[RMDB]
RNA sequence: GGGAACGACUCGAGUAGAGUCGAAAAUCAUCAAGCUGCAAAACCCAUGACACUAGACUGUAAAAGUACACAUUGUUACAGCAGCAGUGCACAAGGCUUGAUUCCUCGCCCGAAUCCGAGGAAUCUAAGCCAGGAAACGACGUUUGAUCAUGAUUCAGCGACGUCAUCACUUCGGUGAUGACGUCGCAAAAGAAACAACAACAACAAC
Reactivity to 2A3 in 0.01 (KOAc 150mM, MgCl2 10mM, bicine 150mM(pH8.5), 24C), signal-to-noise 1, nucleotides 027 to 156: u100c050a070u000c000a030a050g100c040u050g020c120a000a120a140a060c040c000c060a180u140g030a030c000a030c000u100a100g120a170c030u100g000u010a140a200a000a140g030u270a060c140a030c140a220u050u300g100u160u130a000c010a010g000c000a000g000c000a000g000u000g100c010a100c000a250a030g010g000c000u070u000g000a000u000u000c000c000u000c000g030c000c040c190g160a100a040u020c040c000g010a000g000g000a000a000u030c010u110a000a000g000c000c000a000g000g030a020a090a000c100g060a000c000g070u000u000u000g100a020u140c130a040u210g000a020u030u030c100a000

This 207-nucleotide RNA was probed chemically with 2A3. Reactivities are rounded to 0.1 and cut off at 0 and 3. The 2A3 profile rests on 362 reads. For 2A3 the reverse transcriptase was SuperScript II with manganese.